[RMDB]
RNA sequence: GGGAACGACUCGAGUAGAGUCGAAAAGUGCUGAUUGAAAUUCAUGGGAGCCUCUCCAUAAUGGAUGAACGCCGCGAUAGUUCGCGCAGUCGCGACGUAAACGCUCUGUCUUCCCGUUCAGGCCUCAAAAUUAUACUAGUUUCGACUAGUAUAAUUUAAAAGAAACAACAACAACAAC
Reactivity to 2A3 in 0.01 (KOAc 150mM, MgCl2 10mM, bicine 150mM(pH8.5), 24C), signal-to-noise 5, nucleotides 027 to 126: g030u020g020c020u030g040a210u160u100g050a130a130a070u130u100c040a060u100g030g030g020a030g040c040c030u090c010u000c040c010a070u230a270a060u200g010g000a010u070g030a060a030c010g010c020c000g010c010g000a000u020a060g110u100u130c070g010c020g000c080a010g010u010c000g000c000g000a010c000g020u010a020a080a040c020g010c010u000c000u020g040u040c020u010u010c000c010c000g000u050u050c040a040g000g080c020c010u060c050a060
Reactivity to DMS in 0.01 (KOAc 150mM, MgCl2 10mM, bicine 150mM(pH8.5), 24C), signal-to-noise 9, nucleotides 027 to 126: g020u000g010c020u000g010a150u010u000g000a110a130a080u000u010c050a040u010g010g010g000a060g010c080c070u000c060u000c000c010a120u010a080a070u000g000g010a040u010g010a110a040c030g010c020c010g020c010g010a010u000a110g010u000u000c220g010c200g020c040a290g010u000c010g010c000g020a010c010g000u000a050a080a090c160g000c020u000c020u000g010u010c060u000u000c010c010c010g010u000u000c100a070g010g010c050c070u010c100a060